[RMDB]
Structure probing data (2A3 and DMS) for a 177-nucleotide construct. Source: RMDB library M2PK50, as collected in RNAgym. For 2A3, 2,101 sequencing reads were counted.
RNA sequence: GGGAACGACUCGAGUAGAGUCGAAAACGCGAACUGUUCGCAGUUCGCGAAAUAACAAACAAGAGCUAACCUACUGCGAUAAGCCCUAGCUAAGUAGGUAAAAAAGAGGAAAGUUCGCUUUCCUCAACAUAUUCCUUCCGUUCGCGGAAGGAAUAUGAAAAGAAACAACAACAACAAC
Reactivity to 2A3 in 0.01 (KOAc 150mM, MgCl2 10mM, bicine 150mM(pH8.5), 24C), signal-to-noise 2, nucleotides 027 to 126: c000g000c000g000a010a000c000u010g050u100u100c180g000c080a000g010u000u020c000g000c000g000a010a000a010u030a030a000c090a080a070a000c050a070a050g090a020g200c030u200a040a060c000c000u000a010c010u010g000c020g010a040u020a130a030g000c000c000c020u010a010g030c030u010a080a000g020u000a010g000g050u040a010a030a000a000a000a030g030a020g000g010a030a000a000g030u130u230c260g020c180u000u020u000c010c000u000c000a010a000
Reactivity to DMS in 0.01 (KOAc 150mM, MgCl2 10mM, bicine 150mM(pH8.5), 24C), signal-to-noise 3, nucleotides 027 to 126: c050g000c010g010a000a010c010u000g000u000u010c190g030c040a010g000u000u000c000g030c010g010a000a010a070u010a110a120c180a070a070a110c190a090a080g000a120g020c080u000a070a100c000c000u000a000c000u000g010c030g000a160u010a100a150g020c000c000c000u000a220g000c020u010a030a070g020u010a010g010g010u020a020a070a050a060a090a070g000a040g010g000a010a000a010g000u000u000c260g020c000u000u000u000c000c000u000c000a050a080